[RMDB]
RNA sequence: GGGAACGACUCGAGUAGAGUCGAAAAUUUGGAAGUCAACCACAUAAAUAGCGGUUCAGCUCAGUUUAUCAAGAUUCAAAAUGGACUUCCAACCAGGUGAACUCUGUGCUUACUACCGCCUUUGCCGUCGAUAUAGGUCCUUCGGGACCUAUAUCGAAAAAGAAACAACAACAACAAC
Reactivity to DMS in 0.01 (KOAc 150mM, MgCl2 10mM, bicine 150mM(pH8.5), 24C), signal-to-noise 2, nucleotides 027 to 126: u010u050u010g000g020a000a020g000u000c000a160a140c230c100a070c170a080u010a000a080a100u020a120g000c020g000g000u000u070c180a080g000c000u000c130a080g000u000u020u010a130u000c160a110a100g010a100u020u030c140a070a000a070a080u020g000g000a050c020u030u000c000c000a020a060c120c030a050g000g000u000g000a080a070c090u000c020u020g000u000g000c030u010u010a020c150u010a010c000c010g000c030c120u010u070u000g010c070c030g020
Reactivity to 2A3 in 0.01 (KOAc 150mM, MgCl2 10mM, bicine 150mM(pH8.5), 24C), signal-to-noise 4, nucleotides 027 to 126: u060u010u010g000g000a020a000g010u010c020a020a060c020c010a060c030a090u150a040a150a000u170a040g010c030g090g010u080u070c050a010g010c000u000c060a010g020u000u000u040a190u100c060a080a100g020a230u170u070c050a060a070a030a130u140g030g000a010c000u040u020c000c000a000a010c010c010a040g050g090u050g060a020a020c030u000c020u050g010u000g020c010u030u050a030c050u020a000c010c000g030c000c030u070u060u130g130c040c040g050
Chemical mapping of a 177-nucleotide RNA with DMS and 2A3.
The data come from the RNA Mapping Database (RMDB), library OK1LIB.
For DMS the reverse transcriptase was MarathonRT.
The RNA was probed in 150 mM KOAc, 10 mM MgCl2 and 150 mM bicine (pH 8.5) at 24 C.
Values cover nucleotides 27 to 126.